[RMDB]
RNA sequence: GGGAACGACUCGAGUAGAGUCGAAAAGGCCAAAGUCCAGGACAGUGGCGAGUUUGAGUGCAGGACAGAAGGGGUCUCGGCCUUCUUCGGCGUCACUGUCCAAGGUCAGGAAGCAUGCCAGCCUGGGCAUAAGCUCUUGAUUCGUCAAGAGCUUAUGAAAAGAAACAACAACAACAAC
Reactivity to DMS in 0.01 (KOAc 150mM, MgCl2 10mM, bicine 150mM(pH8.5), 24C), signal-to-noise 9, nucleotides 027 to 126: g010g020c010c040a070a120a140g010u000c020c030a200g010g010a020c010a020g020u000g010g000c010g010a090g010u000u000u000g000a090g020u000g020c060a200g010g010a050c070a110g010a040a030g010g010g010g000u000c020u010c280g010g000c000c010u000u010c010u000u000c020g000g000c020g010u000c000a020c000u000g000u000c010c010a030a020g010g000u000c030a080g000g010a100a110g000c070a080u010g000c020c030a110g010c020c010u000g010g000g010
Reactivity to 2A3 in 0.01 (KOAc 150mM, MgCl2 10mM, bicine 150mM(pH8.5), 24C), signal-to-noise 4, nucleotides 027 to 126: g050g000c020c000a050a070a010g060u010c020c010a010g000g000a000c000a000g000u000g010g010c060g010a070g040u070u140u200g150a110g030u210g040c070a040g030g070a020c030a050g060a030a010g000g040g000g010u000c030u040c110g190g000c010c000u150u100c000u000u010c040g080g000c000g000u000c010a000c000u000g000u000c000c010a000a000g010g000u020c020a010g070g060a040a040g050c040a040u120g020c000c010a020g020c010c000u040g000g000g020
The data come from the RNA Mapping Database (RMDB), library OK2TRN. Structure probing data (DMS and 2A3) for a 177-nucleotide construct. The reactions ran in a buffer of 150 mM KOAc, 10 mM MgCl2 and 150 mM bicine (pH 8.5), at 24 C. The DMS profile rests on 24,354 reads.